[RMDB]
Conditions: 150 mM KOAc, 10 mM MgCl2 and 150 mM bicine (pH 8.5), 24 C. This 207-nucleotide RNA was probed chemically with 2A3 and DMS. As a SHAPE reagent, 2A3 marks flexible, mostly unpaired nucleotides at the ribose 2'-OH. It was measured as part of the RMDB library M2RFPK.
RNA sequence: GGGAACGACUCGAGUAGAGUCGAAAAGCAACUUAGGAUUUUAGGCUCCCCGUGCGUGUCUCGAACCAUGCCGGACCAAACCCACGGGGGCUGGCGGUCCCCGUGCGGUCAAAAUCAAACCGCUGGAAAAACAGUUCUAGCUUCGGCUAGAACUGAAUCAUUGUAAACGGUUCGCCGUUUACAAUGAAAAAGAAACAACAACAACAAC
Reactivity to 2A3 in 0.01 (KOAc 150mM, MgCl2 10mM, bicine 150mM(pH8.5), 24C), signal-to-noise 2, nucleotides 027 to 156: g020c020a000a090c040u130u160a140g030g070a200u120u060u060u210a070g020g000c010u080c020c040c010c020g060u100g040c030g010u080g010u010c100u080c240g060a050a030c030c000a020u030g030c020c010g000g030a010c040c010a130a070a040c000c000c010a000c000g000g000g000g000g000c000u000g000g000c000g000g000u000c000c000c000c000g000u000g020c050g000g030u010c010a070a070a010a110u140c030a110a110a140c000c000g000c020u050g030g020a100a110a020a000a000c000a000g000u000u000c010u000a000g000c000u030u040c200g070g000c000u000a000g000a000a000c000u000g000a000a000
Reactivity to DMS in 0.01 (KOAc 150mM, MgCl2 10mM, bicine 150mM(pH8.5), 24C), signal-to-noise 1, nucleotides 027 to 156: g020c000a020a140c020u010u030a070g010g030a120u000u000u010u000a100g030g000c040u000c000c030c030c090g060u000g000c000g030u000g020u010c070u000c080g010a120a160c110c010a040u000g030c060c070g000g000a150c050c010a130a040a120c010c020c020a010c040g020g000g010g050g010c000u010g010g010c120g020g030u010c000c000c020c010g070u000g010c040g020g000u000c020a050a110a140a050u020c050a060a090a070c030c030g010c010u030g010g010a050a130a120a110a130c000a010g010u000u000c000u010a000g020c000u010u000c240g030g000c000u000a010g010a010a000c010u010g000a010a080